The record gives the reactivity of an RNA of 170 nucleotides to DMS and 2A3. For 2A3, 28,856 sequencing reads were counted. Reactivities are given for positions 27 through 129. Conditions: 150 mM KOAc, 10 mM MgCl2 and 150 mM bicine (pH 8.5), 24 C.
RNA sequence: GGGAACGACUCGAGUAGAGUCGAAAACGGGAACGUGAAGCAUGGUGGGGACGAAGCCCCCUCCGGGCGCUCCCCUCGGAUCUCCGCCGGGUGGGUUCACAUCCCCAACCCGCGGGCCGGCUGUUCUAGGCAGGGAUGUUCGCAUCCCUGAAAAGAAACAACAACAACAAC
Reactivity to DMS in 0.01 (KOAc 150mM, MgCl2 10mM, bicine 150mM(pH8.5), 24C), signal-to-noise 6, nucleotides 027 to 129: c070g000g000g000a020a020c080g040u020g020a090a110g030c090a100u000g040g030u000g010g010g000g010a060c140g030a110a110g000c080c000c010c060c060u000c050c060g020g020g030c060g040c130u000c020c000c010c060u000c000g020g010a150u020c070u030c000c040g040c060c090g020g000g060u020g010g000g010u020u060c140a070c230a170u070c000c000c000c000a040a050c000c000c000g000c050g000g000g000c000c010g000g030c030u000g010u000u000c000u000a070g000g000
Reactivity to 2A3 in 0.01 (KOAc 150mM, MgCl2 10mM, bicine 150mM(pH8.5), 24C), signal-to-noise 9, nucleotides 027 to 129: c030g000g030g050a050a010c050g050u100g060a130a020g050c040a060u100g040g010u040g010g020g000g010a020c090g140a080a060g040c010c000c000c000c010u040c020c020g000g000g000c010g010c040u020c000c000c000c000u010c000g040g010a060u050c100u020c050c020g070c070c050g000g000g020u030g010g010g010u120u140c140a110c040a170u200c010c000c000c000a050a190c010c000c000g000c010g000g000g000c000c010g010g000c030u050g020u050u010c030u050a050g100g000